Chemical mapping of a 170-nucleotide RNA with 2A3 and DMS. Conditions: 150 mM KOAc, 10 mM MgCl2 and 150 mM bicine (pH 8.5), 24 C.

RNA sequence: GGGAACGACUCGAGUAGAGUCGAAAAGAGUGGACGUUGUCCUCCUUCGGAUGCCCAGGUCGGACCGCGAGGAGGUGGAGAUGCCAUGCCGACCCGAAGAGGAAAGAAGGACGCGAGACGCAAACCUGAAGGCUCAUGUUCGCAUGAGCCAAAAGAAACAACAACAACAAC
Reactivity to 2A3 in 0.01 (KOAc 150mM, MgCl2 10mM, bicine 150mM(pH8.5), 24C), signal-to-noise 4, nucleotides 027 to 129: g090a010g040u130g000g040a030c060g060u090u120g060u110c000c010u010c000c000u060u050c010g070g010a020u090g040c000c000c000a020g070g020u050c000g010g040a040c000c020g010c010g010a000g030g000a020g020g010u050g020g020a090g000a000u130g000c040c000a020u040g010c000c010g060a050c040c010c000g000a000a000g020a040g020g010a000a030a040g030a040a000g000g000a000c010g070c060g050a080g000a020c040g020c070a060a030a050c000c020u070g040a140a030
Reactivity to DMS in 0.01 (KOAc 150mM, MgCl2 10mM, bicine 150mM(pH8.5), 24C), signal-to-noise 5, nucleotides 027 to 129: g010a040g000u000g030g020a000c050g060u020u030g030u000c020c030u010c030c080u040u010c060g010g020a120u030g030c070c020c050a140g000g000u020c080g070g010a070c030c030g020c150g020a160g000g030a000g020g040u050g000g000a110g030a080u020g030c030c010a070u040g060c050c040g010a040c060c010c090g000a060a000g030a110g000g000a100a000a020g000a070a040g040g020a050c160g000c140g030a090g000a060c100g040c020a050a090a160c080c040u070g060a010a020